[RMDB]
The record gives the reactivity of an RNA of 207 nucleotides to DMS and 2A3. Values cover nucleotides 27 to 156. The data come from the RNA Mapping Database (RMDB), library M2RFPK. The RNA was probed in 150 mM KOAc, 10 mM MgCl2 and 150 mM bicine (pH 8.5) at 24 C. For DMS the reverse transcriptase was MarathonRT. The DMS profile rests on 4,310 reads.
RNA sequence: GGGAACGACUCGAGUAGAGUCGAAAAACAACAUGCCCAGAUAGCCCAGACCUUCAAGGCUACGGUGCGUUGCGACGCACGGUCUGAUUCUUCACAACGACGUUCACCGCGUCUUCUUCCAUCCCCCUCCAGCGCACGAAGUUCGCUUCGUGCGCAAGAAUAGUGUUUCCUUCGGGAAACACUAUUCAAAAGAAACAACAACAACAAC
Reactivity to DMS in 0.01 (KOAc 150mM, MgCl2 10mM, bicine 150mM(pH8.5), 24C), signal-to-noise 2, nucleotides 027 to 156: a090c060a090a080c070a130u010g000c010c020c040a130g010a160u000a040g000c030c010c080a130g020a110c080c040u000u000c120a150a090g010g000c010u000a040c070g030g000u000g030c070g000u000u010g030c100g030a120c030g010c020a040c050g020g020u000c040u010g000a180u010u010c060u000u000c020a050c090a150a120c040g030a120c020g000u010u000c050a140c030c060g000c040g000u000c030u000u000c030u000u000c020c020a110u000c000c020c020c000c010u000c030c030a130g000c000g010c000a020c010g030a020a020g040u000u010c300g050c000u000u000c010g020u020g000c010g010c000a010a010
Reactivity to 2A3 in 0.01 (KOAc 150mM, MgCl2 10mM, bicine 150mM(pH8.5), 24C), signal-to-noise 3, nucleotides 027 to 156: a000c070a030a010c040a090u170g010c000c010c020a050g080a130u040a020g010c010c030c030a030g010a080c020c020u080u090c080a080a050g010g000c020u030a030c060g080g010u010g000c010g010u030u080g050c170g090a010c010g000c010a020c050g000g040u020c030u000g020a120u140u060c040u160u130c050a060c020a210a070c110g030a010c000g110u160u160c060a020c080c030g020c020g030u000c000u070u030c010u080u010c060c030a090u110c000c020c000c000c020u000c010c010a010g000c000g000c000a000c000g000a000a000g010u010u050c060g030c090u000u000c000g000u000g000c000g000c000a000a000

The 2A3 profile rests on 2,759 reads.